[RMDB]
RNA sequence: GGGAACGACUCGAGUAGAGUCGAAAAGAGGAAUCGUUUGAAAUCAUCGUAGUAAUCGCGCGAAAAUCACGUGAAAUAAUCAGAGGAAUCGUUUGAAAUCAUCGUAGUAAUCGCGCGAAAAUCACGUACAGCAUAUUACGUUCGCGUAAUAUGCUGUAAAAGAAACAACAACAACAAC
Reactivity to 2A3 in 0.01 (KOAc 150mM, MgCl2 10mM, bicine 150mM(pH8.5), 24C), signal-to-noise 2, nucleotides 027 to 126: g120a000g000g120a140a110u120c100g040u110u160u200g110a030a030a010u150c070a030u080c010g010u000a100g010u040a090a090u010c010g000c000g000c040g020a000a000a000a110u060c020a020c000g020u010g040a000a030a030u190a030a070u070c030a040g050a030g100g190a110a110u120c070g080u000u050u050g040a060a030a000u050c000a020u150c050g000u020a040g000u010a060a020u000c000g020c000g010c020g020a000a000a000a020u010c000a000c000g040u030
Reactivity to DMS in 0.01 (KOAc 150mM, MgCl2 10mM, bicine 150mM(pH8.5), 24C), signal-to-noise 1, nucleotides 027 to 126: g000a150g000g010a190a040u010c050g040u000u030u010g020a070a050a120u000c070a060u000c050g030u010a060g010u000a080a160u010c000g040c000g000c020g000a040a020a200a140u010c180a010c010g000u020g000a000a150a130u050a080a080u010c000a110g000a000g000g050a120a080u000c030g000u000u000u000g030a030a060a140u000c070a080u040c030g030u000a060g000u010a020a250u020c010g000c000g000c030g010a000a020a080a110u010c160a030c050g000u000